The record gives the reactivity of an RNA of 207 nucleotides to 2A3 and DMS. Reactivities are given for positions 27 through 156. 2A3 adducts were read by reverse transcription with SuperScript II with manganese. The 2A3 profile rests on 1,812 reads.
RNA sequence: GGGAACGACUCGAGUAGAGUCGAAAAGUUCGCUUUCGAGCGAACAAAAAACCGUAGGUACGUGGUAUUGCAAGGUUGAUGAUUCGAAAGAGUCACAACUGAUGACCAAUACGUAACAUCGUACCUAAACGGAAAAAGGUUGGCUUCGGCCAACCAAACACACAGAUGGUUUCGACCAUCUGUGUGUAAAAGAAACAACAACAACAAC
Reactivity to 2A3 in 0.01 (KOAc 150mM, MgCl2 10mM, bicine 150mM(pH8.5), 24C), signal-to-noise 2, nucleotides 027 to 156: g000u000u000c000g010c040u120u070u170c280g020a010g010c010g000a000a000c020a010a000a000a000a050a000c010c010g010u010a000g020g010u000a000c000g000u000g000g000u010a000u000u020g010c060a120a120g030g000u020u000g040a300u000g000a000u000u000c000g000a080a070a030g010a030g000u020c000a000c020a010a000c000u020g070a160u160g030a060c040c020a000a000u000a000c000g020u010a010a040c080a190u200c000g000u010a000c000c000u030a040a120a000c020g040g100a030a000a000a040a100g030g000u010u010g000g010c000u010u030c220g120g000c000c000a000a000c000c000a000a000
Reactivity to DMS in 0.01 (KOAc 150mM, MgCl2 10mM, bicine 150mM(pH8.5), 24C), signal-to-noise 1, nucleotides 027 to 156: g000u000u000c020g030c000u000u000u000c270g060a050g030c000g030a010a000c020a000a050a070a050a030a180c000c000g000u010a060g010g020u000a000c010g080u010g000g040u010a000u000u000g000c000a090a210g000g020u000u000g000a130u020g000a000u010u000c010g030a270a110a170g000a060g010u010c000a090c030a010a040c010u020g000a080u000g000a150c300c020a020a020u000a020c010g070u000a110a160c020a000u000c010g000u000a000c000c000u000a000a000a080c040g030g010a100a050a070a080a150g020g040u000u000g000g010c030u000u000c180g080g040c000c000a020a000c000c010a000a100